The data come from the RNA Mapping Database (RMDB), library OK2TST.
An RNA of 177 nucleotides, treated with DMS and 2A3 and read out base by base.
2A3 adducts were read by reverse transcription with SuperScript II with manganese.
For DMS the reverse transcriptase was MarathonRT.

RNA sequence: GGGAACGACUCGAGUAGAGUCGAAAACAGCUCACCCUCGAAGUGCACCGGUGAUGCGUUGGCGGGCAAUCGAAUUGGCGUAUUCGGACCGAUGAUCGCGGUGUUGGGCUUGAGGAAUAUCACCGGGAUUUUACUAGCCAUUCGUGGCUAGUAAAAUAAAAGAAACAACAACAACAAC
Reactivity to DMS in 0.01 (KOAc 150mM, MgCl2 10mM, bicine 150mM(pH8.5), 24C), signal-to-noise 5, nucleotides 027 to 126: c090a080g010c040u000c030a080c020c010c020u010c070g020a090a120g000u010g030c090a110c010c020g030g020u010g020a030u000g010c050g010u010u010g000g010c020g010g000g000c150a070a100u010c020g010a050a090u000u010g000g020c130g040u000a100u000u000c020g010g010a090c040c020g000a060u000g010a070u000c040g010c090g010g000u000g000u010u010g010g000g000c040u010u000g020a060g000g000a110a090u010a070u000c030a040c010c010g010g000g010
Reactivity to 2A3 in 0.01 (KOAc 150mM, MgCl2 10mM, bicine 150mM(pH8.5), 24C), signal-to-noise 3, nucleotides 027 to 126: c030a000g030c010u030c020a050c010c010c000u030c030g080a120a030g110u050g080c020a040c030c010g000g000u050g020a010u040g020c020g030u020u080g100g040c040g040g050g000c050a040a070u070c030g040a000a060u050u110g160g070c130g010u110a040u000u050c020g030g020a050c010c010g000a020u060g020a020u050c030g000c020g040g010u030g030u060u070g030g010g000c010u040u090g040a040g040g090a050a080u090a010u070c040a020c020c040g010g000g000